[RMDB]
RNA sequence: GGGAACGACUCGAGUAGAGUCGAAAAGAUAUGGAAUGCGACGACAUGCUGUGUCGGAAACGACCAGCAACAGCGUCGCCAUUCCUAAGUCAAAACCGAUGAUGAUACUUCGGUAUCAUCAUCGGAACCUAAGGUGUUACUUCGGUAACACCUUAGGAAAAGAAACAACAACAACAAC
Reactivity to 2A3 in 0.01 (KOAc 150mM, MgCl2 10mM, bicine 150mM(pH8.5), 24C), signal-to-noise 5, nucleotides 027 to 126: g010a010u040a010u080g000g010a000a000u010g000c000g020a010c010g020a100c050a100u030g000c010u030g080u080g000u300c000g010g010a020a030a020c010g010a000c000c000a010g010c000a000a030c070a010g040c010g000u010c010g000c000c000a010u000u000c000c000u000a040a020g030u020c040a020a020a090a180c000c000g000a000u000g000a000u000g000a000u010a010c020u020u090c300g130g000u000a010u000c000a000u000c000a000u000c000g010g000a010a000
Reactivity to DMS in 0.01 (KOAc 150mM, MgCl2 10mM, bicine 150mM(pH8.5), 24C), signal-to-noise 5, nucleotides 027 to 126: g000a010u000a250u000g000g000a010a010u000g000c000g000a020c000g020a130c090a250u000g000c000u010g010u020g010u000c000g000g010a040a040a110c010g010a010c010c000a010g010c000a000a050c260a120g000c020g010u000c000g000c120c060a000u000u000c000c000u000a040a090g010u010c010a080a060a120a130c010c000g000a010u000g000a010u000g000a010u000a000c000u010u010c220g040g000u000a000u000c000a010u000c000a000u000c000g000g010a020a050

The record gives the reactivity of an RNA of 177 nucleotides to 2A3 and DMS. 2A3 adducts were read by reverse transcription with SuperScript II with manganese. The data come from the RNA Mapping Database (RMDB), library TTRDEL. Values cover nucleotides 27 to 126.